[RMDB]
RNA sequence: GGGAACGACUCGAGUAGAGUCGAAAACAUGUCACGUGACAUUCUAUAGUGGAUCGGUAUACACCUAUAAUGUGACCGUGCGAGGUAGACACGAUGAGGCAUUAAGCGUGACUCAAUGACGUGGAGCGAUUGUUACUCCAUUCGUGGAGUAAUAGUCAAAAGAAACAACAACAACAAC
Reactivity to DMS in 0.01 (KOAc 150mM, MgCl2 10mM, bicine 150mM(pH8.5), 24C), signal-to-noise 9, nucleotides 027 to 126: c050a040u000g010u000c010a230c060g020u000g000a130c140a090u010u000c040u000a040u000a090g020u010g010g010a070u000c030g010g000u000a060u010a080c030a020c050c050u010a080u000a070a160u000g010u000g000a040c020c010g020u000g000c060g000a090g010g010u000a030g010a080c020a020c020g000a010u000g010a030g000g000c030a020u000u000a010a110g050c190g000u000g000a040c010u000c030a070a240u000g010a040c040g020u000g000g000a110g010c180
Reactivity to 2A3 in 0.01 (KOAc 150mM, MgCl2 10mM, bicine 150mM(pH8.5), 24C), signal-to-noise 9, nucleotides 027 to 126: c010a020u030g000u010c000a000c040g020u030g030a020c010a090u060u000c020u020a050u030a050g080u090g110g040a060u050c020g020g000u050a100u020a110c020a010c010c020u060a040u040a160a090u070g010u010g020a010c000c000g010u020g030c030g030a050g040g070u030a010g010a020c000a000c010g010a000u060g010a000g000g000c010a000u020u030a010a020g060c020g030u010g010a010c010u000c020a040a110u090g020a020c020g010u030g030g060a060g060c070

Notes:
Structure probing data (DMS and 2A3) for a 177-nucleotide construct. Values are in units of 0.01, from 0 to 300, in steps of 10. Conditions: 150 mM KOAc, 10 mM MgCl2 and 150 mM bicine (pH 8.5), 24 C. For 2A3 the reverse transcriptase was SuperScript II with manganese. For 2A3, 161,039 sequencing reads were counted.